Source: RMDB library OK2TRN, as collected in RNAgym. This 177-nucleotide RNA was probed chemically with 2A3 and DMS. 2A3 adducts were read by reverse transcription with SuperScript II with manganese. Reactivities are given for positions 27 through 126. The RNA was probed in 150 mM KOAc, 10 mM MgCl2 and 150 mM bicine (pH 8.5) at 24 C.

RNA sequence: GGGAACGACUCGAGUAGAGUCGAAAAAGGCAUGUAUGAAUAGCUGCUACAGAAACUAAUUCCUGCCAAAAGAACAGUGGGAAUCUUCUAUCUCUCUCAGUUUGCCAUGGUGCCAGGGAUAGUAUAAACAACUUCACAAUUUCGAUUGUGAAGUUGUAAAAGAAACAACAACAACAAC
Reactivity to 2A3 in 0.01 (KOAc 150mM, MgCl2 10mM, bicine 150mM(pH8.5), 24C), signal-to-noise 3, nucleotides 027 to 126: a000g050g010c030a020u080g000u230a070u120g080a150a070u040a120g050c030u040g020c000u040a020c010a070g090a070a120a000c030u060a060a080u000u010c020c000u020g010c020c030a080a150a010a040g060a090a050c020a040g000u010g020g020g000a020a020u000c030u130u040c030u040a090u020c040u000c000u000c000u000c030a040g000u030u090u100g010c030c020a050u060g030g010u010g040c030c010a010g070g000g020a040u060a080g050u050a080u170a150a110
Reactivity to DMS in 0.01 (KOAc 150mM, MgCl2 10mM, bicine 150mM(pH8.5), 24C), signal-to-noise 4, nucleotides 027 to 126: a060g000g010c010a020u010g030u000a060u010g010a110a140u010a070g010c030u000g000c070u010a120c160a070g010a080a040a040c100u000a080a100u010u000c000c010u000g020c040c070a040a080a120a140g010a100a040c210a080g000u010g000g000g000a040a030u000c120u010u010c060u000a080u000c050u000c020u000c060u000c070a060g010u000u000u000g010c190c030a070u000g020g010u000g010c030c030a060g000g000g010a030u000a040g000u000a050u000a060a080